This 177-nucleotide RNA was probed chemically with 2A3 and DMS.
[RMDB]
RNA sequence: GGGAACGACUCGAGUAGAGUCGAAAAGCUGUGCGGGUGCCAAAAAGGAGGAAAUACAUACCGGUACGGCUCACGGUGCGGCAGUGUGGAGACCUGUUGUAAAGCGCGGCGCCCAUCGCGGUACCGCCCUUACACCAAAGUUCGCUUUGGUGUAAGGAAAAGAAACAACAACAACAAC
Reactivity to 2A3 in 0.01 (KOAc 150mM, MgCl2 10mM, bicine 150mM(pH8.5), 24C), signal-to-noise 2, nucleotides 027 to 126: g020c010u020g020u020g030c030g010g050g010u020g010c030c020a070a100a030a000a070g160g050a070g000g070a050a080a000u150a050c110a020u190a060c000c030g060g010u040a030c050g040g000c000u000c020a040c030g060g000u070g000c040g030g000c020a030g020u070g020u050g130g020a040g040a060c010c060u040g060u070u050g090u120a070a100a060g010c020g000c000g050g000c010g020c000c000c000a080u130c040g060c050g020g000u020a040c000c000g000c020
Reactivity to DMS in 0.01 (KOAc 150mM, MgCl2 10mM, bicine 150mM(pH8.5), 24C), signal-to-noise 3, nucleotides 027 to 126: g010c010u010g040u000g000c050g000g000g010u000g030c080c100a020a100a070a120a140g000g020a100g000g000a100a070a080u020a100c110a100u020a100c030c030g030g060u000a040c070g000g000c020u010c100a080c060g000g000u010g000c010g010g010c040a040g010u000g020u010g020g010a100g010a110c070c050u000g000u010u000g010u010a090a050a080g000c140g010c020g040g010c020g020c030c010c010a110u000c150g020c070g000g040u010a070c040c020g020c090
Values cover nucleotides 27 to 126. The DMS profile rests on 1,893 reads. The RNA was probed in 150 mM KOAc, 10 mM MgCl2 and 150 mM bicine (pH 8.5) at 24 C.